The record gives the reactivity of an RNA of 207 nucleotides to 2A3.

RNA sequence: GGGAACGACUCGAGUAGAGUCGAAAACUGGCUUGAUUGAGCUAGAUGACAUUCUUGGAGGCUGGCAGAAGAGCGACUUGACACUGAUUGGCGGUCGUCCUGCUAUGGGCAAGACGGCAUUUAUUGGCGGUCUUGUGGAAGCUGCUGCUGAGGCUGGUCGCCUGUAGCUAUUCGUAGCUACAGGCGAAAAAGAAACAACAACAACAAC
Reactivity to 2A3 in 0.01 (KOAc 150mM, MgCl2 10mM, bicine 150mM(pH8.5), 24C), signal-to-noise 1, nucleotides 027 to 156: c010u020g020g070c010u060u030g070a300u120u230g000a010g000c010u000a020g020a180u190g040a070c060a170u070u010c020u020u060g020g000a000g000g040c010u020g040g000c040a020g010a030a090g010a040g020c020g000a060c040u050u110g020a040c030a000c090u110g040a180u090u040g100g000c070g050g000u010c000g000u000c000c010u010g010c020u080a230u120g170g000g000c010a000a000g010a000c010g030g000c000a070u000u290u000a160u110u250g110g010c020g000g000u010c020u050u000g010u010g000g000a020a030g000c000u000g010c010u010g000c080u160g060a010g030g030c000u010g050g010